[RMDB]
RNA sequence: GGGAACGACUCGAGUAGAGUCGAAAAGGACCACCCAGCGGGCGCGGCGUUCGACGGUGGUCGGAUCGUCGGGACCUAGUGAGUUGAGGAAUGCCGCGGCCAGGGCCGCGAUCACCUCGGACCGUCCGACUGCGCAAUAUUUCGAUAUUGCGCAGUCAAAAGAAACAACAACAACAAC
Reactivity to 2A3 in 0.01 (KOAc 150mM, MgCl2 10mM, bicine 150mM(pH8.5), 24C), signal-to-noise 1, nucleotides 027 to 126: g060g040a020c030c000a040c000c020c000a050g080c100g000g000g050c190g000c000g100g000c010g000u030u020c000g020a020c010g110g170u180g100g000u020c000g000g010a080u130c010g000u030c000g040g060g190a300c030c030u070a140g010u060g260a140g030u100u080g000a030g040g060a160a090u130g010c030c000g000c010g000g000c000c030a130g120g170g000c030c000g000c010g040a020u000c030a030c000c000u000c030g010g050a040c020c000g010u000c000c000
Reactivity to DMS in 0.01 (KOAc 150mM, MgCl2 10mM, bicine 150mM(pH8.5), 24C), signal-to-noise 2, nucleotides 027 to 126: g010g010a110c050c080a140c020c040c020a160g000c050g010g010g020c010g020c040g030g010c040g020u000u000c010g010a030c050g020g010u020g040g000u000c020g010g010a010u000c090g020u000c000g030g030g020a170c050c020u030a060g020u000g010a130g030u000u000g020a050g000g000a080a070u000g030c300c030g000c000g000g010c000c070a080g010g040g040c000c000g030c010g010a050u000c120a170c000c000u020c040g000g000a060c060c070g010u000c050c050
Structure probing data (2A3 and DMS) for a 177-nucleotide construct. For DMS, 1,683 sequencing reads were counted. It was measured as part of the RMDB library OK2TRN. The RNA was probed in 150 mM KOAc, 10 mM MgCl2 and 150 mM bicine (pH 8.5) at 24 C. 2A3 adducts were read by reverse transcription with SuperScript II with manganese.